[RMDB]
RNA sequence: GGGAACGACUCGAGUAGAGUCGAAAAAACAAAUGUUGUUCUGCAUGGAAGUUGUAAACAAGUACUUCGAAAUCUAUGACGGUGGUUGUCUUAAUGCUUCUGAAGUGGUUGUUAAUAAUUUAGACAAAAGCAAAGUCCUUCGGGACUUUGAAAAGAAACAACAACAACAAC
Reactivity to DMS in 0.01 (KOAc 150mM, MgCl2 10mM, bicine 150mM(pH8.5), 24C), signal-to-noise 3, nucleotides 027 to 129: a040a170c050a090a090a100u090g010u070u000g000u020u020c090u030g000c080a150u020g060g010a040a030g010u010u040g030u020a120a060a020c040a140a050g030u010a050c020u010u010c010g000a000a000a000u000c060u020a090u080g030a090c090g030g020u000g040g040u050u030g040u000c040u000u030a040a070u040g000c130u000u040c030u000g020a000a000g010u040g000g020u050u030g020u030u020a080a050u010a000a000u030u010u000a070g050a000c070a050a020a170a130g010
Reactivity to 2A3 in 0.01 (KOAc 150mM, MgCl2 10mM, bicine 150mM(pH8.5), 24C), signal-to-noise 2, nucleotides 027 to 129: a000a010c150a040a120a070u120g000u000u000g000u010u000c020u000g090c000a060u050g050g070a110a000g020u050u090g100u150a040a000a000c010a030a070g270u000a040c000u000u010c000g050a090a040a000u080c030u040a080u030g060a040c030g020g170u300g060g100u180u010g000u010c020u000u000a010a070u060g000c010u040u000c000u060g000a040a000g000u000g040g120u000u000g080u060u000a100a000u040a000a060u030u000u030a060g030a040c040a110a170a000a000g060